[RMDB]
RNA sequence: GGGAACGACUCGAGUAGAGUCGAAAAGACGGGACCUACCUGUACGACUACGCCACCCUCGAGGAAGACGCUCCGCUCCCCUACGUCUCCUGGUAUGCGGCCCAGGCCUUCUGCAGGUGGCUGGAGGGUCCACUCUUCACUUCGGUGAAGAGUGGACAAAAGAAACAACAACAACAAC
Reactivity to DMS in 0.01 (KOAc 150mM, MgCl2 10mM, bicine 150mM(pH8.5), 24C), signal-to-noise 2, nucleotides 027 to 126: g000a150c080g010g000g030a090c080c050u000a040c030c020u000g030u010a120c060g010a100c040u000a070c120g010c010c030a050c030c010c030u000c140g020a060g000g000a030a080g000a100c050g000c070u000c040c030g020c050u000c030c000c000c040u010a120c070g020u000c030u000c000c000u030g000g000u000a080u020g060c300g000g020c120c030c100a080g020g020c010c010u000u000c070u000g010c110a110g020g030u000g000g000c060u010g000g000a110g000g020

Source: RMDB library OK2TRN, as collected in RNAgym. This 177-nucleotide RNA was probed chemically with DMS. The RNA was probed in 150 mM KOAc, 10 mM MgCl2 and 150 mM bicine (pH 8.5) at 24 C. Reactivities are rounded to 0.1 and cut off at 0 and 3.